This 177-nucleotide RNA was probed chemically with DMS and 2A3. For 2A3, 41,409 sequencing reads were counted. For DMS, 30,000 sequencing reads were counted. 2A3 adducts were read by reverse transcription with SuperScript II with manganese. Source: RMDB library OK2TRN, as collected in RNAgym. The reactions ran in a buffer of 150 mM KOAc, 10 mM MgCl2 and 150 mM bicine (pH 8.5), at 24 C. For DMS the reverse transcriptase was MarathonRT.
RNA sequence: GGGAACGACUCGAGUAGAGUCGAAAACAGGGAUGAGCAUUGCGCAAGCUAUUGAAGGCGCACGCACCGUGGUCAUUCUCGAGGGUGUGGGCGAUCACGAAAACAUUGGAUCGAUGUUUAGAAACGCCACACUGAUAUAGUUCGCUAUAUCAGUGUGAAAAGAAACAACAACAACAAC
Reactivity to DMS in 0.01 (KOAc 150mM, MgCl2 10mM, bicine 150mM(pH8.5), 24C), signal-to-noise 9, nucleotides 027 to 126: c120a130g000g000g010a110u000g000a060g010c040a080u010u000g010c020g010c030a070a230g000c060u000a120u000u010g020a130a120g010g000c020g020c140a060c140g000c020a070c270c080g010u000g010g000u000c060a080u000u000c040u010c140g000a130g010g000g010u010g020u010g000g010g000c080g000a050u010c040a050c060g000a100a040a030a030c040a030u000u000g010g010a100u010c110g000a040u000g000u000u000u000a110g000a070a070a090c120g000c100
Reactivity to 2A3 in 0.01 (KOAc 150mM, MgCl2 10mM, bicine 150mM(pH8.5), 24C), signal-to-noise 9, nucleotides 027 to 126: c050a020g050g020g020a070u080g040a060g040c050a050u040u120g000c020g000c030a060a040g030c030u150a120u230u290g110a150a050g080g000c010g000c020a000c020g000c000a030c030c030g030u030g010g040u030c030a070u150u020c090u060c090g040a120g020g060g010u180g020u080g030g010g020c020g020a050u070c020a020c070g060a040a030a020a030c030a030u030u100g100g060a050u180c090g020a020u020g030u010u040u040a100g030a050a100a010c040g020c030